Chemical mapping of a 177-nucleotide RNA with DMS and 2A3. For 2A3, 4,636 sequencing reads were counted. It was measured as part of the RMDB library OK1LIB. Reactivities are given for positions 27 through 126.

RNA sequence: GGGAACGACUCGAGUAGAGUCGAAAAAGGCGUAUGACGAAGCGUAAGAAGCCACACGACUCAACAGCCCGAUAGUAGCGGAUACGAGCUAGCUGUCAAAGCAAAAUUGAGAUUGCACAGCGUACGCAAUUAAAAAUAUUUUCGAAUAUUUUUAAUUAAAAGAAACAACAACAACAAC
Reactivity to DMS in 0.01 (KOAc 150mM, MgCl2 10mM, bicine 150mM(pH8.5), 24C), signal-to-noise 6, nucleotides 027 to 126: a080g020g010c010g010u000a040u020g010a090c080g010a150a140g000c030g000u000a090a100g010a100a180g010c030c020a060c080a120c040g010a080c030u000c050a060a050c130a140g020c030c040c210g010a060u010a050g010u000a050g010c030g010g000a110u020a080c140g000a140g000c030u010a060g020c000u000g000u010c070a050a080a120g010c020a040a030a070a170u020u030g000a090g000a120u010u010g020c050a060c050a090g010c030g000u010a020c060g000c030
Reactivity to 2A3 in 0.01 (KOAc 150mM, MgCl2 10mM, bicine 150mM(pH8.5), 24C), signal-to-noise 5, nucleotides 027 to 126: a010g060g020c020g000u050a040u070g060a090c050g050a080a020g010c000g010u050a050a070g060a100a010g060c020c000a010c000a000c040g100a050c000u010c050a040a060c010a070g010c020c020c020g010a010u030a060g040u030a010g010c010g020g060a060u080a150c060g030a020g010c020u030a040g060c010u010g010u070c010a070a040a010g030c000a040a060a080a040u130u120g010a020g040a090u040u060g000c030a040c010a020g000c010g030u030a010c030g000c020